Chemical mapping of a 207-nucleotide RNA with DMS and 2A3. It was measured as part of the RMDB library M2RFPK. DMS adducts were read by reverse transcription with MarathonRT. The RNA was probed in 150 mM KOAc, 10 mM MgCl2 and 150 mM bicine (pH 8.5) at 24 C.
[RMDB]
RNA sequence: GGGAACGACUCGAGUAGAGUCGAAAAGUAGAGUGUUUCAUGUCAGUAAGCAUGCCGGGGAAUGGUGGUUUACCCCGUUAUCAAAUGAUUACCGACCAAUAAUUGGCGAAACUCGUUUCGCGUUGGCAAAGUCACGGCGUGUUCGCACGCCGUGAAAACUUAGCAAUGACUUCGGUCAUUGCUAAGUAAAAGAAACAACAACAACAAC
Reactivity to DMS in 0.01 (KOAc 150mM, MgCl2 10mM, bicine 150mM(pH8.5), 24C), signal-to-noise 1, nucleotides 027 to 156: g000u000a070g010a140g050u020g020u010u000u000c070a090u010g000u000c020a110g000u000a010a080g000c020a050u000g060c090c030g040g020g020g020a110a090u010g000g000u010g000g010u000u000u000a190c000c000c020c000g060u010u000a000u020c140a020a070a040u000g020a100u000u000a040c030c010g000a050c040c050a080a070u010a050a220u000u000g020g070c000g000a170a020a060c040u000c180g040u000u010u010c020g010c020g050u010u010g010g000c090a030a080a170g010u000c020a040c000g000g010c030g070u020g020u000u010c300g030c020a000c000g050c000c000g000u000g010a000a010a030
Reactivity to 2A3 in 0.01 (KOAc 150mM, MgCl2 10mM, bicine 150mM(pH8.5), 24C), signal-to-noise 4, nucleotides 027 to 156: g130u110a010g030a020g050u030g030u030u080u110c060a040u070g070u050c040a020g050u090a110a000g050c010a010u040g040c020c000g000g000g000g010a020a050u060g000g020u020g020g020u020u010u070a050c000c000c000c000g060u050u020a030u050c030a000a020a060u050g020a010u050u020a010c010c040g060a070c040c080a020a010u170a120a110u120u130g080g000c010g000a010a020a030c060u060c130g040u010u020u010c010g000c000g000u010u020g030g000c120a180a070a040g060u010c000a000c020g000g000c000g020u000g030u020u030c140g040c050a000c000g000c000c000g000u000g000a000a000a000